RNA sequence: GGGAACGACUCGAGUAGAGUCGAAAACAGGAGGACCUCUCCGCCGCCACCUCCAAGCUCGAGGAGAAGGAGAAGACCGUUCAAGAGGCUGAGGCUGAGGUCGCUUCUUUGAACCGUCGCAUGACCAAUUAUUAGCGUAUUUCGAUACGCUAAUAAUAAAAGAAACAACAACAACAAC
Reactivity to 2A3 in 0.01 (KOAc 150mM, MgCl2 10mM, bicine 150mM(pH8.5), 24C), signal-to-noise 5, nucleotides 027 to 126: c030a010g020g020a020g010g020a050c000c010u020c000u020c020c010g010c020c020g020c010c020a040c000c010u000c010c020a100a070g060c050u070c080g150a090g040g060a050g040a040a050g050g050a050g000a090a040g070a060c020c040g060u090u050c060a060a020g040a040g120g000c050u080g050a040g090g000c080u040g020a010g020g060u000c010g030c030u020u010c000u040u040u110g020a020a000c020c010g040u040c040g000c100a090u130g070a080c020c050a060
Reactivity to DMS in 0.01 (KOAc 150mM, MgCl2 10mM, bicine 150mM(pH8.5), 24C), signal-to-noise 9, nucleotides 027 to 126: c140a090g000g010a050g000g000a060c050c030u000c010u000c050c060g000c060c100g010c050c050a170c090c010u010c010c050a090a190g010c090u000c060g010a120g010g010a120g000a090a120g000g010a130g000a110a120g000a060c080c100g000u000u010c080a080a080g010a080g000g010c020u010g010a170g010g010c090u010g000a050g020g010u000c050g010c010u000u000c000u000u000u020g000a080a150c040c080g010u000c040g010c120a090u000g000a110c070c080a110
Overview:
This 177-nucleotide RNA was probed chemically with 2A3 and DMS.